[RMDB]
RNA sequence: GGGAACGACUCGAGUAGAGUCGAAAACCUCCGGGUCCUCUUCGUCUCGGACUGGCUCAUCUUCGGAGUGGGGGCGGCGGCGUCUGGUCUCUUAUUUCUUCCUUCUGAGAAGAGGAGACAGCUUGCCAUAGACGCAGCUUCGGCUGCGUCAAAAGAAACAACAACAACAAC
Reactivity to 2A3 in 0.01 (KOAc 150mM, MgCl2 10mM, bicine 150mM(pH8.5), 24C), signal-to-noise 3, nucleotides 027 to 129: c000c000u000c000c000g020g000g010u020c000c030u080c060u060u070c050g140u010c050u000c030g000g030a040c070u070g010g000c000u000c020a000u000c020u090u070c030g000g020a050g020u070g000g010g000g000g000c030g010g030c030g030g000c000g050u000c040u090g110g000u030c000u000c000u030u050a170u090u090u000c000u040u020c000c020u060u110c060u090g080a150g010a140a010g000a000g040g020a000g000a000c000a000g040c010u070u130g010c000c000a020u010a050
Reactivity to DMS in 0.01 (KOAc 150mM, MgCl2 10mM, bicine 150mM(pH8.5), 24C), signal-to-noise 3, nucleotides 027 to 129: c110c010u010c080c080g030g000g050u010c100c000u060c030u080u020c100g040u010c000u010c050g020g020a090c040u030g050g000c110u010c050a090u030c050u020u030c100g050g000a080g020u020g000g000g000g000g000c040g000g030c080g080g000c060g000u030c010u080g030g010u040c010u030c060u040u060a170u000u000u000c020u000u080c040c080u030u070c180u090g070a150g000a010a020g020a090g050g020a000g000a020c000a050g030c050u010u130g030c060c080a140u070a100

The record gives the reactivity of an RNA of 170 nucleotides to 2A3 and DMS.
The reactions ran in a buffer of 150 mM KOAc, 10 mM MgCl2 and 150 mM bicine (pH 8.5), at 24 C.
For DMS the reverse transcriptase was MarathonRT.